[RMDB]
The data come from the RNA Mapping Database (RMDB), library OK1LIB. Chemical mapping of a 177-nucleotide RNA with 2A3. For 2A3, 392 sequencing reads were counted.
RNA sequence: GGGAACGACUCGAGUAGAGUCGAAAAUACACUUGAAGUAUUUAUCUCAGUAGCCUACGUAUUCUUACAGUAUAAUGUACUUCAACUAAACACUUAAUGCGUGUGGAUUUCUUAGAUAAUAUUACCGCAGGCACUCGGCAUUCGUGCCGAGUGCCUGAAAAGAAACAACAACAACAAC
Reactivity to 2A3 in 0.01 (KOAc 150mM, MgCl2 10mM, bicine 150mM(pH8.5), 24C), signal-to-noise 1, nucleotides 027 to 126: u080a000c040a000c050u060u170g070a120a000g000u000a040u040u070u040a000u050c000u000c000a010g000u040a000g000c020c020u020a000c000g000u020a040u190u000c010u190u040a040c020a120g060u110a100u100a130a190u190g030u130a030c020u060u210c110a020a120c000u120a010a170a000c060a020c220u170u200a000a000u000g000c000g000u240g110u140g050g000a020u000u040u120c000u000u000a000g000a000u000a210a090u020a000u010u070a050c000c000g010